[RMDB]
RNA sequence: GGGAACGACUCGAGUAGAGUCGAAAAUCUUGUUCGUAUUCUAAGGAGGGAUGACAAAAUUCAUGAAUUCUUGGCCGGCACAGGCAAGAACAAGAGUGCUGGCAGGGUGAAGCGCGCCGUUUAGCGCCGAUUACCCGAGAUUCGUCUCGGGUAAUCGAAAAGAAACAACAACAACAAC
Reactivity to 2A3 in 0.01 (KOAc 150mM, MgCl2 10mM, bicine 150mM(pH8.5), 24C), signal-to-noise 3, nucleotides 027 to 126: u010c000u020u040g010u000u020c040g030u110a210u140u100c060u100a100a070g050g020a030g040g050g000a030u060g010a030c070a050a210a060a090u110u090c040a090u130g190a180a110u130u040c040u080u110g160g020c010c010g030g000c010a010c020a040g160g000c090a070a040g020a010a010c030a000a040g040a010g040u000g000c010u010g020g000c020a020g060g010g000u110g060a070a010g030c020g000c020g020c030c030g040u020u030u090a020g000c010g020c000
Reactivity to DMS in 0.01 (KOAc 150mM, MgCl2 10mM, bicine 150mM(pH8.5), 24C), signal-to-noise 3, nucleotides 027 to 126: u000c020u000u000g010u000u010c070g010u000a100u000u000c080u010a100a140g000g010a100g010g010g010a050u010g000a110c140a040a040a130a050u010u010c050a050u000g010a120a120u010u000c050u000u000g010g050c010c000g000g030c050a020c070a090g000g000c140a030a070g020a040a080c060a030a050g010a070g020u000g000c010u000g020g000c000a070g010g000g000u000g000a090a140g030c050g000c030g010c040c100g020u000u020u000a060g000c020g030c010

Notes:
Structure probing data (2A3 and DMS) for a 177-nucleotide construct. Source: RMDB library OK2TRN, as collected in RNAgym. For DMS the reverse transcriptase was MarathonRT.